[RMDB]
RNA sequence: GGGAACGACUCGAGUAGAGUCGAAAAUUAACCCAUUAACAUUUGUGCUACAUGUGCAUGGGAAAGUGUAUUAAACAUUUCACUGGUUUUGGGAAAUAUUAUUUUCUUUCUUACAACAUGAUGCCUCUCGAGGCCAUGUAUUCGUACAUGGCCUCGAAAAAGAAACAACAACAACAAC
Reactivity to 2A3 in 0.01 (KOAc 150mM, MgCl2 10mM, bicine 150mM(pH8.5), 24C), signal-to-noise 4, nucleotides 027 to 126: u120u140a060a090c020c030c010a010u080u210a030a070c100a070u070u090u160g120u120g010c010u060a110c000a010u010g000u020g070c030a070u050g000g000g000a030a000a000g010u010g050u050a040u070u100a060a070a000c010a080u000u070u040c090a130c130u070g300g040u210u150u120u220g130g010g010a000a000a050u080a050u110u000a030u030u020u070u040c000u040u010u020c020u080u170a070c020a030a000c000a040u020g010a040u170g050c000c000u070c000
Reactivity to DMS in 0.01 (KOAc 150mM, MgCl2 10mM, bicine 150mM(pH8.5), 24C), signal-to-noise 1, nucleotides 027 to 126: u040u040a130a250c000c000c000a070u090u030a070a030c170a220u000u070u010g000u040g050c050u030a300c000a000u000g020u000g060c180a030u000g000g000g000a000a000a000g020u000g000u020a000u000u000a080a000a070c100a000u000u000u000c000a010c000u000g000g000u000u020u030u000g000g020g000a010a000a000u000a000u000u020a070u000u010u060u000c000u000u000u040c000u000u000a120c080a210a050c070a020u060g020a300u010g010c010c000u000c200